Background:
The record gives the reactivity of an RNA of 177 nucleotides to DMS and 2A3. Reactivities are given for positions 27 through 126.
RNA sequence: GGGAACGACUCGAGUAGAGUCGAAAAUCGGCCAAUCAUGAUGUAGCUUUAAAGGUUAUGUAUUAGUGGUGGGCCACUAUAUACUUGCAGGCGAAGUUGUGGCUAGUGCGCAAUGUGGGAUCCACUGGCCUGUUACGUAUUUCGAUACGUAACAGGCAAAAGAAACAACAACAACAAC
Reactivity to DMS in 0.01 (KOAc 150mM, MgCl2 10mM, bicine 150mM(pH8.5), 24C), signal-to-noise 3, nucleotides 027 to 126: u010c140g000g060c050c020a040a040u010c020a000u000g020a060u030g020u000a040g000c030u000u000u070a070a090a140g000g010u000u000a020u000g020u010a070u030u030a090g040u010g000g030u010g010g010g010c010c020a050c150u010a080u020a090u000a060c020u020u000g040c020a120g000g000c080g020a080a160g020u010u030g000u000g000g030c040u000a030g000u000g000c070g020c040a050a040u010g070u020g010g000g000a130u010c050c020a030c100u000g010
Reactivity to 2A3 in 0.01 (KOAc 150mM, MgCl2 10mM, bicine 150mM(pH8.5), 24C), signal-to-noise 5, nucleotides 027 to 126: u110c040g050g000c000c010a020a050u040c010a010u060g020a020u170g030u040a000g040c040u120u090u200a150a180a040g060g020u080u030a040u090g100u040a060u080u120a100g010u030g010g010u050g030g060g050c000c000a000c000u000a020u010a000u000a090c020u040u070g030c050a060g080g000c050g060a150a050g030u060u040g020u030g050g020c040u040a020g050u010g080c030g030c080a050a080u160g000u080g040g050g030a060u000c010c020a050c030u000g050